[RMDB]
RNA sequence: GGGAACGACUCGAGUAGAGUCGAAAAGAUAUGGACCUGUUAAGGGAGACGAGUCGGAAACGACCGUCAUCGAUCUUACAGGUCCUAAGUCAAAACAUGGUCUCACCGUUCGCGGUGAGACCAUGAAGGGUAAAUAAAUGUUCGCAUUUAUUUACCCAAAAGAAACAACAACAACAAC
Reactivity to 2A3 in 0.01 (KOAc 150mM, MgCl2 10mM, bicine 150mM(pH8.5), 24C), signal-to-noise 2, nucleotides 027 to 126: g000a000u050a030u110g000g000a000c000c000u030g090u230u240a030a010g100g160g010a030g000a020c020g030a100g080u000c000g020g000a040a030a020c000g000a000c010c010g050u000c010a020u160c030g090a110u020c000u000u000a000c010a000g000g000u000c000c000u000a000a000g000u000c010a000a000a050a060c010a000u010g020g000u020c000u010c000a000c050c000g070u120u090c300g010c000g130g000u000g010a000g030a000c000c010a000u000g000a000a000
Reactivity to DMS in 0.01 (KOAc 150mM, MgCl2 10mM, bicine 150mM(pH8.5), 24C), signal-to-noise 3, nucleotides 027 to 126: g010a050u010a300u010g000g000a010c000c000u010g000u010u000a010a000g000g000g010a080g020a010c010g010a200g020u000c000g000g000a050a090a170c000g010a010c000c010g000u000c000a090u000c150g010a090u010c000u000u000a010c010a030g000g020u000c000c000u000a000a040g000u010c020a090a100a110a230c010a010u000g000g010u010c000u000c010a010c000c000g030u010u000c260g020c030g000g000u000g000a000g000a000c000c000a000u000g000a040a080